[RMDB]
RNA sequence: GGGAACGACUCGAGUAGAGUCGAAAAUGAUCGAGAGAUCUAACGAUGUACGCGAGUCAAUGGCACAGACUCGAGCGAAAGCUCGGUCGAAAGACCGCGUACAUCGGUCGGCAAGUGUAGAGUCAAAACCCGUACGUACUUUCGAGUACGUACGGGUAAAAGAAACAACAACAACAAC
Reactivity to DMS in 0.01 (KOAc 150mM, MgCl2 10mM, bicine 150mM(pH8.5), 24C), signal-to-noise 2, nucleotides 027 to 126: u010g000a010u020c000g010a270g000a300g000a020u000c010u000a150a100c020g000a000u000g000u000a000c000g000c000g020a170g030u000c000a080a050u000g010g020c140a100c160a160g000a000c010u000c000g020a010g000c000g010a100a100a130g000c000u000c000g010g000u000c000g000a110a050a080g010a010c000c000g010c000g000u000a000c000a000u010c000g000g000u000c030g000g000c030a040a100g010u000g000u000a100g010a030g000u000c010a120a040a160
Reactivity to 2A3 in 0.01 (KOAc 150mM, MgCl2 10mM, bicine 150mM(pH8.5), 24C), signal-to-noise 1, nucleotides 027 to 126: u070g000a000u040c000g010a000g000a000g000a070u000c000u020a060a090c030g000a000u010g010u010a010c000g000c000g030a010g040u040c090a060a080u180g200g000c110a090c030a110g040a000c030u060c210g000a010g030c000g040a170a010a000g020c010u010c020g000g030u000c000g000a030a000a000g000a010c000c000g000c000g020u000a000c000a000u000c000g000g000u010c010g020g000c060a130a160g030u000g050u230a040g040a000g060u060c040a020a060a030